Structure probing data (2A3 and DMS) for a 177-nucleotide construct.
The data come from the RNA Mapping Database (RMDB), library OK2TST.
For 2A3 the reverse transcriptase was SuperScript II with manganese.
[RMDB]
RNA sequence: GGGAACGACUCGAGUAGAGUCGAAAAUCAACAAAUCGGAUGAAAUCACCCAUCCCCAAGUGCUCGAAGAGUUCCAGCUUCUGCAGAAAUCCCUGCAGCAAAGGAACACCGCGGUGAAGGAGUCCUACAUAUCGCCUAUAUUCGUAUAGGCGAUAUGAAAAGAAACAACAACAACAAC
Reactivity to 2A3 in 0.01 (KOAc 150mM, MgCl2 10mM, bicine 150mM(pH8.5), 24C), signal-to-noise 6, nucleotides 027 to 126: u070c010a010a080c030a050a130a050u150c080g020g000a010u020g020a030a020a070u030c000a010c010c000c010a040u070c010c000c000c010a090a050g080u070g110c050u070c120g130a120a050g060a040g070u010u000c010c000a010g010c050u070u040c000u020g000c000a000g040a070a280a100u110c060c020c010u010g000c000a000g000c010a060a040a040g010g000a030a010c020a020c020c080g050c130g010g020u010g010a010a010g030g010a010g010u010c010c010u020a030
Reactivity to DMS in 0.01 (KOAc 150mM, MgCl2 10mM, bicine 150mM(pH8.5), 24C), signal-to-noise 6, nucleotides 027 to 126: u020c090a060a130c130a080a120a100u010c150g010g010a040u000g010a170a220a080u000c050a050c030c000c080a170u010c010c010c020c070a110a110g020u000g010c060u000c060g010a090a070g000a220g000u000u000c010c010a070g010c170u000u010c020u000g020c010a010g010a090a070a110u010c150c160c010u000g010c000a010g010c220a030a070a100g000g000a040a030c030a070c130c100g010c110g020g000u000g010a050a050g010g000a300g000u000c010c010u010a190